[RMDB]
An RNA of 207 nucleotides, treated with 2A3 and DMS and read out base by base.
RNA sequence: GGGAACGACUCGAGUAGAGUCGAAAAUGUUAUGAGAAAAAUGGCUAAAGUUAGCACACCUAAUAGGAAUCCUAAAUCACCCUCUUGCAUGCCAUUCACCUGAUAAAGGAGUAAGUGAAAGUCGGUCUUCCGGGAGUCCCAACGGUACCCGGGCUACGGUCAUAUGUAGGUUCGCCUACAUAUGACCAAAAGAAACAACAACAACAAC
Reactivity to 2A3 in 0.01 (KOAc 150mM, MgCl2 10mM, bicine 150mM(pH8.5), 24C), signal-to-noise 2, nucleotides 027 to 156: u050g000u050u060a150u140g030a040g080a010a140a050a110a000u060g010g000c010u070a120a040a150g170u070u060a010g020c040a030c030a030c090c060u110a070a080u020a150g090g000a080a030u080c030c000u100a120a110a100u050c050a070c020c010c030u010c000u020u070g020c020a010u060g000c040c000a000u000u110c050a060c050c050u020g060a120u120a160a140a030g020g020a020g080u080a090a020g010u020g130a110a030a020g010u050c030g010g000u020c010u100u060c010c000g000g030g040a020g050u040c000c010c020a040a020c080g010g040u040a060c000c000c000g030g030g000c000u090a040c180
Reactivity to DMS in 0.01 (KOAc 150mM, MgCl2 10mM, bicine 150mM(pH8.5), 24C), signal-to-noise 1, nucleotides 027 to 156: u050g010u000u000a030u020g000a100g000a030a020a040a130a110u000g000g020c000u000a070a130a120g020u000u000a030g020c080a080c090a100c120c020u000a050a090u000a080g000g000a120a130u000c000c000u000a060a070a120u010c060a100c010c010c020u000c030u000u010g000c090a130u010g010c040c050a100u000u010c010a120c070c020u000g010a110u010a040a080a050g010g000a050g000u000a090a160g000u030g010a100a040a120g010u000c010g000g010u010c030u000u000c000c020g020g000g000a150g010u010c000c000c000a100a110c150g030g000u000a090c030c000c030g050g020g070c000u000a060c230
Overview:
The reactions ran in a buffer of 150 mM KOAc, 10 mM MgCl2 and 150 mM bicine (pH 8.5), at 24 C. 2A3 adducts were read by reverse transcription with SuperScript II with manganese. The DMS profile rests on 1,968 reads.